[RMDB]
RNA sequence: GGGAACGACUCGAGUAGAGUCGAAAAAAAAGAUAUGGAUAACUCGACGAUCUCCGUGGCCACUUGGACCUGCUCUCGGAAACGAGAGCAGCUAGUGGCACGGAGGGAGAGUUAUCCUAAGUCAAAACAUCCCUGUUAGGUUCGCCUAACAGGGAUGAAAAGAAACAACAACAACAAC
Reactivity to DMS in 0.01 (KOAc 150mM, MgCl2 10mM, bicine 150mM(pH8.5), 24C), signal-to-noise 3, nucleotides 027 to 126: a040a060a090a090g000a030u010a300u010g010g000a020u010a000a020c000u000c000g000a070c260g000a040u020c000u010c000c010g030u000g010g020c010c000a000c000u000u020g050g000a120c300c000u000g010c010u000c010u010c010g020g000a160a080a150c000g000a010g010a010g000c000a000g030c020u000a010g010u000g000g020c000a000c010g000g010a000g000g000g010a020g010a030g010u000u000a000u000c000c000u000a020a060g010u000c020a080a070a090a240
Reactivity to 2A3 in 0.01 (KOAc 150mM, MgCl2 10mM, bicine 150mM(pH8.5), 24C), signal-to-noise 2, nucleotides 027 to 126: a010a000a000a140g110a050u150a080u180g010g000a000u010a010a000c000u020c040g270a300c020g000a300u020c010u000c000c000g050u030g210g170c010c020a030c050u060u170g050g090a200c040c000u030g000c020u010c000u010c000g030g070a060a040a070c030g010a010g000a010g020c000a000g020c000u000a000g000u000g000g000c010a000c000g000g010a000g020g000g000a000g000a000g010u000u000a000u010c000c000u000a070a010g020u010c030a010a050a000a190
The data come from the RNA Mapping Database (RMDB), library TTRDES. This 177-nucleotide RNA was probed chemically with DMS and 2A3. High 2A3 reactivity points to a flexible backbone, as in loops and unpaired stretches. The RNA was probed in 150 mM KOAc, 10 mM MgCl2 and 150 mM bicine (pH 8.5) at 24 C. DMS adducts were read by reverse transcription with MarathonRT. 2A3 adducts were read by reverse transcription with SuperScript II with manganese.